[RMDB]
RNA sequence: GGGAACGACUCGAGUAGAGUCGAAAAGGACUCGCCGCCCAAGUUCGAGAGGGGCCAAAAUGCCGAACGAAGGGAACGCGGGGGAAGGAUCAUAUGACGAGAGGGGAUGAGCUGGUAAAGAGGGGUGAACGGCGGGUCUUCGGACCCGCCAAAAGAAACAACAACAACAAC
Reactivity to 2A3 in 0.01 (KOAc 150mM, MgCl2 10mM, bicine 150mM(pH8.5), 24C), signal-to-noise 1, nucleotides 027 to 129: g000g040a060c000u000c020g070c000c010g070c000c080c000a050a030g000u070u200c010g020a000g080a000g040g000g000g210c000c020a000a000a000a220u230g000c000c000g000a000a000c090g000a060a000g000g000g000a000a180c000g050c090g010g000g000g000g000a000a000g010g040a020u070c000a000u150a140u300g030a000c000g000a000g040a070g100g010g000g000a000u140g000a000g010c000u050g030g000u030a010a010a010g130a000g000g000g000g020u000g000a030a030c010